[RMDB]
The data come from the RNA Mapping Database (RMDB), library VIROID. Structure probing data (2A3) for a 207-nucleotide construct. Reactivities are given for positions 27 through 156.
RNA sequence: GGGAACGACUCGAGUAGAGUCGAAAAGAGGGCCUCCUCCCUCGCCUUCGAGCCGGGUCUUGCAUCGGGUUGGCUCAUCCUGAGACCGGGGAGCUUCGACGAUCUCUUGUCUCUCCUGAAGGAGGAAGGAGCUCUCGAACGCUCUCCCGACCGCUCGCUUAUUGCGACUGUUCGCAGUCGCAAUAAGAAAAGAAACAACAACAACAAC
Reactivity to 2A3 in 0.01 (KOAc 150mM, MgCl2 10mM, bicine 150mM(pH8.5), 24C), signal-to-noise 3, nucleotides 027 to 156: g030a000g000g000g020c050c190u120c010c040u080c000c030c020u010c010g000c020c030u040u030c080g010a010g010c040c020g030g000g070u020c060u110u230g120c080a180u170c120g060g070g020u080u110g050g000c000u020c020a030u070c000c030u050g000a010g000a010c020c050g000g000g000g000a010g010c000u000u010c010g030a050c160g010a020u000c000u000c020u040u060g280u110c060u100c020u080c140c020u240g240a300a160g020g000a000g020g000a020a010g030g000a000g010c000u010c000u000c000g010a030a010c080g010c000u000c090u030c000c000c000g010a010c000c050g030c020u000c000g050